[RMDB]
The record gives the reactivity of an RNA of 207 nucleotides to 2A3. The RNA was probed in 150 mM KOAc, 10 mM MgCl2 and 150 mM bicine (pH 8.5) at 24 C. For 2A3 the reverse transcriptase was SuperScript II with manganese.
RNA sequence: GGGAACGACUCGAGUAGAGUCGAAAAAACACAGUCUGGUCUAACUCCCGUUCCAGCUUCUCCAAGUCGCGCCACCGGACAGUUUCAUCAUCAUCCAGCAGCGAAGCCUGCAGAGACGAACCGACUUUCGGGUGGGAUAGCGGAUGGUCGUCGGGCACCAACAGUGGGAAUUCGUUCCCACUGUUGGAAAAGAAACAACAACAACAAC
Reactivity to 2A3 in 0.01 (KOAc 150mM, MgCl2 10mM, bicine 150mM(pH8.5), 24C), signal-to-noise 1, nucleotides 027 to 156: a000a000c100a010c010a020g010u000c010u020g040g040u080c080u080a120a060c020u050c020c000c040g000u070u020c010c010a000g000c000u050u010c030u010c060c000a080a100g040u100c060g000c040g000c020c010a000c190c000g050g020a050c020a020g010u020u100u060c040a120u000c000a010u000c030a070u000c000c070a040g000c010a000g030c040g150a130a050g030c000c000u000g020c020a030g030a000g020a040c030g020a050a040c050c070g000a010c000u060u010u040c030g150g030g000u060g000g060g030a070u090a060g030c020g020g000a040u070g000g030u040c000g110u060c020g030g100g000c040a060